[RMDB]
Chemical mapping of a 177-nucleotide RNA with DMS and 2A3. The DMS profile rests on 1,828 reads. In probing experiments dimethyl sulfate is read out at A N1 and C N3, which are open when not base-paired. The 2A3 profile rests on 2,192 reads. The reactions ran in a buffer of 150 mM KOAc, 10 mM MgCl2 and 150 mM bicine (pH 8.5), at 24 C. Reactivities are given for positions 27 through 126. 2A3 adducts were read by reverse transcription with SuperScript II with manganese.
RNA sequence: GGGAACGACUCGAGUAGAGUCGAAAACUGGUCUUCAACGAGGAGGGCAAGGAUGCCCAGAAGUUUGUACGCUCGCUGCACAAGACCAUCAUUGCGAAUCCCAUGGACACGCUGAAGGUGUGCGUCAUCGACUGAUUACGUUCGCGUAAUCAGUCGAAAAAGAAACAACAACAACAAC
Reactivity to DMS in 0.01 (KOAc 150mM, MgCl2 10mM, bicine 150mM(pH8.5), 24C), signal-to-noise 3, nucleotides 027 to 126: c230u000g020g020u000c010u010u000c040a010a050c030g030a030g030g010a280g010g010g030c000a070a220g040g010a160u000g020c030c000c040a110g000a100a150g000u000u000u020g020u010a090c160g010c020u010c000g010c010u010g010c300a100c130a050a030g020a000c030c000a050u000c050a100u010u010g010c150g000a070a140u000c000c000c000a110u010g010g000a070c060a020c020g010c020u010g040a110a050g020g040u000g000u010g010c100g010u000c070a040
Reactivity to 2A3 in 0.01 (KOAc 150mM, MgCl2 10mM, bicine 150mM(pH8.5), 24C), signal-to-noise 3, nucleotides 027 to 126: c010u020g000g010u000c000u030u020c020a000a020c020g010a020g050g050a030g020g000g000c010a010a100g300g080a250u120g000c000c000c000a030g090a080a010g030u120u280u300g140u090a030c080g020c070u000c000g040c020u040g000c020a070c020a120a000g000a000c070c000a010u040c040a020u050u240g000c030g050a060a080u040c030c000c000a020u090g060g020a020c010a010c050g020c050u130g150a110a050g110g000u010g020u010g040c030g040u030c000a030